An RNA of 177 nucleotides, treated with 2A3 and DMS and read out base by base. 2A3 adducts were read by reverse transcription with SuperScript II with manganese. The DMS profile rests on 3,136 reads. The 2A3 profile rests on 3,110 reads. It was measured as part of the RMDB library OK1LIB.
[RMDB]
RNA sequence: GGGAACGACUCGAGUAGAGUCGAAAAACAAACAAUAGAAUGAAACAAAGAGUCGUGCAAAUAAGAGGCUCGACAGAUGCACGACAAAGCGAGCCUACAGGCGUCGAGGAAAACUCGACGCCUGAAACGUCUUCGUCCAGUUCGCUGGAUGAAGACGAAAAGAAACAACAACAACAAC
Reactivity to 2A3 in 0.01 (KOAc 150mM, MgCl2 10mM, bicine 150mM(pH8.5), 24C), signal-to-noise 3, nucleotides 027 to 126: a000c070a010a060a000c030a030a090u150a100g140a100a110u130g080a140a050a020c060a070a200a030g070a050g040u010c000g000u000g000c000a030a000a190u260a240a070g040a030g040g000c000u000c000g040a010c030a070g170a040u100g000c000a000c050g050a040c020a020a030a000g030c000g010a000g000c000c010u030a080c000a000g010g000c000g000u000c000g010a010g030g080a070a100a070a090c000u000c000g000a000c000g000c000c000u000g000a000a000a000
Reactivity to DMS in 0.01 (KOAc 150mM, MgCl2 10mM, bicine 150mM(pH8.5), 24C), signal-to-noise 2, nucleotides 027 to 126: a130c070a110a080a120c150a120a170u060a050g010a070a090u050g000a140a080a060c110a070a060a150g000a080g000u000c000g000u000g000c010a050a080a140u010a160a030g020a030g000g000c010u000c000g000a090c090a090g010a080u010g020c000a000c070g000a040c000a060a070a060g030c060g000a000g000c000c000u000a190c090a000g000g000c060g030u000c020g030a000g040g010a060a090a110a100c000u000c000g000a020c030g000c000c000u000g000a020a030a190